[RMDB]
Overview: Structure probing data (DMS and 2A3) for a 177-nucleotide construct.
RNA sequence: GGGAACGACUCGAGUAGAGUCGAAAAUGAAAUAUUCAAGCAUAAUUGAAGUUGGUCUCGUGGACUCAGCCACAUUUGAAAGAGCAACUAAUGCUGUGAUUAGUUUGCUACUAUCGCUUGGAUUUGCACUGCGAUAGAGUUUCGACUCUAUCGCAGUAAAAGAAACAACAACAACAAC
Reactivity to DMS in 0.01 (KOAc 150mM, MgCl2 10mM, bicine 150mM(pH8.5), 24C), signal-to-noise 2, nucleotides 027 to 126: u010g010a090a110a120u020a010u000u000c010a030a020g010c030a120u010a040a080u000u000g020a110a170g030u010u000g010g000u010c030u010c270g030u010g010g010a030c050u030c060a030g030c000c040a070c120a080u000u000u000g010a060a120a100g000a070g000c000a010a000c000u010a020a010u000g000c100u020g030u010g000a050u000u000a000g000u000u000u010g010c010u000a060c010u000a070u000c120g000c000u030u010g000g010a030u000u000u000g000c210
Reactivity to 2A3 in 0.01 (KOAc 150mM, MgCl2 10mM, bicine 150mM(pH8.5), 24C), signal-to-noise 2, nucleotides 027 to 126: u060g020a000a030a100u180a020u040u040c010a020a010g000c020a100u030a040a060u130u000g070a050a010g000u030u050g010g000u000c020u100c190g180u190g140g010a040c020u040c220a000g030c050c010a020c000a040u060u020u060g110a190a140a020g030a010g020c000a000a010c010u010a000a010u050g160c240u150g140u200g180a010u020u020a010g030u060u080u100g020c010u070a170c020u020a040u070c060g000c040u000u030g040g040a010u010u020u100g010c060
For 2A3, 1,029 sequencing reads were counted.